[RMDB]
RNA sequence: GGGAACGACUCGAGUAGAGUCGAAAACGAUCAGUACGAGUGCGUACUGAUCGAAGCUACUGGUGACAGUAGCAACUCUAAGACAAUGAUAGCCGGAAUCAUUGACAAGUAUAUAAACGCGCCAUAUAUACACUUAGAGAACCGGCAAGGCGCGAAAGCAACUAGCAAUGUUCGCAUUGCUAGUUGCAAAAGAAACAACAACAACAAC
Reactivity to 2A3 in 0.01 (KOAc 150mM, MgCl2 10mM, bicine 150mM(pH8.5), 24C), signal-to-noise 2, nucleotides 027 to 156: c010g000a000u000c000a010g010u010a000c030g040a040g220u220g300c050g000u000a000c010u000g000a000u000c000g000a010a000g000c010u000a000c000u000g000g020u050g030a000c000a000g010u000a000g000c000a000a010c010u000c000u050a160a000g090a080c040a060a050u050g030a010u020a030g050c030c050g030g050a080a040u080c010a050u060u090g020a050c070a090a030g030u000a000u000a000u010a000a150a060c000g040c000g000c000c000a010u020a000u000a010u000a020c030a020c070u070u090a010g010a000g030a160a050c010c000g000g080c010a040a100g000g000c000g000c000g010a000a000a020